[RMDB]
RNA sequence: GGGAACGACUCGAGUAGAGUCGAAAAGAUAUGGACGGUAGGGAGAAUCGCAACUACCCACCGCUUACUAACUCGGAAACGAGUUAGUAAGCGAGGUUGCGCGUUCGACGAUCUACCGUCCUAAGUCGACGUAAGAAUGGUUCGCCAUUCUUACGUCAAAAGAAACAACAACAACAAC
Reactivity to 2A3 in 0.01 (KOAc 150mM, MgCl2 10mM, bicine 150mM(pH8.5), 24C), signal-to-noise 2, nucleotides 027 to 126: g130a110u300a230u300g000g010a000c020g030g000u000a000g000g020g010a030g010a020a000u040c000g020c000a010a010c010u270a300c010c000c020a020c000c010g000c000u020u000a000c000u000a010a000c010u000c000g040g030a010a120a100c020g020a020g010u000u000a010g010u000a000a000g000c010g010a010g000g000u000u010g010c020g030c060g040u000u030c040g100a230c030g000a040u020c000u000a000c000c010g020u020c000c000u000a000a000g050u040c090
Reactivity to DMS in 0.01 (KOAc 150mM, MgCl2 10mM, bicine 150mM(pH8.5), 24C), signal-to-noise 2, nucleotides 027 to 126: g000a120u020a130u010g020g000a000c020g000g000u000a010g000g000g000a040g010a010a020u000c000g020c000a000a020c000u020a170c040c010c000a300c160c000g000c000u000u000a000c000u000a010a000c000u000c000g020g000a110a090a260c020g020a030g010u000u000a000g000u000a010a000g010c020g000a020g020g000u000u000g010c000g000c300g000u000u000c010g000a030c300g010a020u000c000u010a000c000c010g020u000c000c000u000a010a070g010u010c120